Structure probing data (2A3 and DMS) for a 177-nucleotide construct. The data come from the RNA Mapping Database (RMDB), library TTRDES. The reactions ran in a buffer of 150 mM KOAc, 10 mM MgCl2 and 150 mM bicine (pH 8.5), at 24 C. For 2A3, 1,895 sequencing reads were counted. 2A3 adducts were read by reverse transcription with SuperScript II with manganese.
RNA sequence: GGGAACGACUCGAGUAGAGUCGAAAAGAUAUGGACGGUCGUAGACAUGCAUCUCACAUCGGAAACGAUGUACGUGAGAUGCAACAGCUACAGACCGUCCUAAGUCAAAGUGUUAGUUCGCUAACACGCACCUAUCGGGGUUCGCCCCGAUAGGUGCAAAAGAAACAACAACAACAAC
Reactivity to 2A3 in 0.01 (KOAc 150mM, MgCl2 10mM, bicine 150mM(pH8.5), 24C), signal-to-noise 1, nucleotides 027 to 126: g010a030u120a040u190g000g010a000c000g010g040u030c020g020u020a000g000a120c040a070u080g000c010a020u050c000u010c000a000c000a040u030c010g010g080a090a130a100c000g020a030u020g070u170a080c190g170u090g000a000g000a000u000g000c020a010a020c100a000g020c000u000a000c060a180g020a000c000c000g000u000c010c010u000a030a000g000u030c000a010a060a220g010u000g020u020u030a040g020u020u090c280g000c150u010a010a000c010a000c020
Reactivity to DMS in 0.01 (KOAc 150mM, MgCl2 10mM, bicine 150mM(pH8.5), 24C), signal-to-noise 1, nucleotides 027 to 126: g050a120u000a300u000g000g010a020c000g040g030u000c020g010u000a010g020a060c190a240u000g000c030a020u010c040u000c000a040c040a100u000c010g010g000a150a060a160c000g000a020u010g000u000a050c260g040u000g020a000g000a020u000g000c000a070a000c170a190g030c000u000a000c010a180g030a020c010c000g000u010c000c000u020a000a030g020u000c030a050a090a180g030u000g020u000u000a050g020u010u020c300g000c000u000a020a020c000a000c010